RNA sequence: GGGAACGACUCGAGUAGAGUCGAAAAGUCUUGGCCCAGACGCCCGACCCCGUUCUUGGCCAUCCCCAAUGGGGCAAAGAAAACUUGACUAACUAUGCAAAUAAGAGUGUCAUGUGUGUCUGUGUUAAAAUACUCGAGUAUUCGUACUCGAGUAUUUAAAAGAAACAACAACAACAAC
Reactivity to 2A3 in 0.01 (KOAc 150mM, MgCl2 10mM, bicine 150mM(pH8.5), 24C), signal-to-noise 8, nucleotides 027 to 126: g020u030c030u070u060g040g010c000c000c000a010g000a000c010g040c020c020c040g070a140c020c000c000c020g040u090u030c010u030u050g030g010c010c020a070u080c020c010c010c000a030a070u260g020g000g020g000c050a060a050a020g090a020a130a010a010c030u060u070g020a010c020u030a090a000c020u040a070u150g070c100a050a100a130u160a210a100g070a030g070u090g010u040c020a020u060g040u020g010u000g030u040c020u030g080u010g040u090u120a070
Reactivity to DMS in 0.01 (KOAc 150mM, MgCl2 10mM, bicine 150mM(pH8.5), 24C), signal-to-noise 7, nucleotides 027 to 126: g000u020c040u000u010g020g000c020c020c120a120g010a070c070g010c040c010c020g010a130c030c020c020c020g020u010u010c030u010u000g010g010c030c040a110u010c030c010c010c070a090a080u040g000g000g000g020c160a050a060a060g000a070a070a120a070c040u000u010g010a030c020u010a150a150c040u000a040u000g000c170a050a080a050u010a060a060g010a100g010u010g000u000c010a010u020g010u010g020u020g010u000c050u010g000u000g010u010u020a080